[RMDB]
RNA sequence: GGGAACGACUCGAGUAGAGUCGAAAAGUCUGUGCGUUUCCAUUUGAGUAUCCUGAAAACGGGCUUUUCAGCAUGGAACGUACAUAUUAAAUAGUAGGAGUGCAUAGUGGCCCGUAUAGCAGGCAAUGAGGCGAGGAUUGUUUCGACAAUCCUCGAAGUAUGAAGCGUGGUUCGCCACGCUUCAUACAAAAGAAACAACAACAACAAC
Reactivity to 2A3 in 0.01 (KOAc 150mM, MgCl2 10mM, bicine 150mM(pH8.5), 24C), signal-to-noise 2, nucleotides 027 to 156: g070u010c050u060g030u040g000c010g000u030u190u070c000c020a010u130u010u030g070a080g050u100a170u220c000c000u030g070a010a060a070a050c080g020g000g010c030u050u060u080u070c040a010g060c020a030u020g010g020a060a040c010g030u030a010c000a000u030a010u000u190a070a090a090u120a030g080u020a000g000g120a060g030u000g010c010a050u040a140g080u050g090g000c000c000c080g020u060a010u050a070g020c040a010g000g010c030a010a020u070g010a030g020g080c030g000a000g000g000a000u000u010g040u070u040u100c060g070a000c000a000a000u030c000c000u000c000g000a000a000
Reactivity to DMS in 0.01 (KOAc 150mM, MgCl2 10mM, bicine 150mM(pH8.5), 24C), signal-to-noise 1, nucleotides 027 to 156: g020u000c050u000g060u000g020c020g030u000u000u010c000c000a130u000u020u010g020a250g020u000a090u000c040c000u010g010a040a030a070a150c050g000g030g000c040u000u000u000u000c070a190g040c040a020u010g000g000a070a030c010g010u000a100c050a040u000a040u000u000a050a040a170u000a110g040u010a060g010g010a170g070u010g010c030a120u000a180g060u000g000g040c000c010c010g000u000a050u000a080g040c070a040g020g010c010a010a090u010g020a100g040g000c000g010a040g020g020a030u000u000g050u000u000u000c250g000a090c020a010a010u000c010c000u000c000g000a010a090